[RMDB]
RNA sequence: GGGAACGACUCGAGUAGAGUCGAAAAUCAAACGAUUUCGAUCGUUUGAAACGGACGACUCCUGCGGGAGUUAAGGCCAUACGGACAGCCGGGUCCACUGCCAGUCAUUCGGUUUCGACCGAAUGAAUGUGUGAGACUUAUUCGUAAGUCUCACACAAAAAGAAACAACAACAACAAC
Reactivity to DMS in 0.01 (KOAc 150mM, MgCl2 10mM, bicine 150mM(pH8.5), 24C), signal-to-noise 4, nucleotides 027 to 126: u010c010a000a010a010c000g000a010u000u000u010c230g010a020u020c000g010u010u000u000g000a010a050a090c140g000g000a060c080g000a040c020u000c010c000u000g040c140g050g000g000a040g000u000u000a050a090g030g010c020c040a130u000a160c110g010g000a080c140a150g000c040c020g000g020g000u000c020c020a140c140u020g010c040c060a120g020u000c000a000u000u010c000g000g000u000u000u010c230g030a030c000c000g000a010a000u000g000a030a040
Reactivity to 2A3 in 0.01 (KOAc 150mM, MgCl2 10mM, bicine 150mM(pH8.5), 24C), signal-to-noise 3, nucleotides 027 to 126: u000c000a000a000a000c010g010a010u020u070u180c230g100a020u010c000g000u030u000u020g000a040a010a010c060g000g030a020c020g000a010c020u020c010c010u060g010c250g080g000g000a000g000u010u060a060a020g060g000c030c020a070u100a120c070g050g020a020c040a030g040c010c000g070g020g030u010c010c010a030c070u100g090c010c010a050g100u020c000a000u000u010c000g010g050u030u040u110c250g070a020c000c000g010a000a000u000g000a020a030

The data come from the RNA Mapping Database (RMDB), library M2PK50. Chemical mapping of a 177-nucleotide RNA with DMS and 2A3. The RNA was probed in 150 mM KOAc, 10 mM MgCl2 and 150 mM bicine (pH 8.5) at 24 C.